An RNA of 177 nucleotides, treated with DMS and 2A3 and read out base by base.
The DMS profile rests on 1,678 reads.
RNA sequence: GGGAACGACUCGAGUAGAGUCGAAAAUGCAGGUGACUUUUUCUUAUAUGUUGAAAUUUUCACUGCCACGAGAAAGCCUCUCUGCGGAUGCGAUGCCACUGUUAAUCUCGUGAUAGUGUUCGUGCAAGCAUUUAGUCCUAUUCGUAGGACUAAAUGCAAAAGAAACAACAACAACAAC
Reactivity to DMS in 0.01 (KOAc 150mM, MgCl2 10mM, bicine 150mM(pH8.5), 24C), signal-to-noise 2, nucleotides 027 to 126: u010g010c080a040g030g040u010g000a050c040u000u000u000u000u000c030u000u010a150u000a100u010g030u010u000g010a020a080a150u000u020u010u000c010a010c020u000g000c100c120a010c090g000a020g000a040a140a150g020c010c040u010c040u010c050u010g010c050g010g030a110u000g010c080g010a080u000g010c140c050a020c100u020g010u000u000a040a120u000c050u000c070g010u010g020a040u000a020g020u000g020u000u000c080g000u030g020c230a100a110
Reactivity to 2A3 in 0.01 (KOAc 150mM, MgCl2 10mM, bicine 150mM(pH8.5), 24C), signal-to-noise 2, nucleotides 027 to 126: u100g000c010a010g040g120u070g040a050c020u010u100u080u080u000c030u060u240a200u030a070u300g080u080u060g030a040a060a050u080u060u000u010c020a020c000u000g010c000c000a040c000g000a010g000a060a070a000g050c000c000u010c010u010c050u130g030c020g060g060a060u160g000c020g000a020u150g030c040c060a050c030u020g060u100u090a100a070u060c040u010c090g050u030g020a030u020a040g080u030g010u000u050c070g030u040g060c020a080a100

Values cover nucleotides 27 to 126. 2A3 adducts were read by reverse transcription with SuperScript II with manganese. The 2A3 profile rests on 1,258 reads.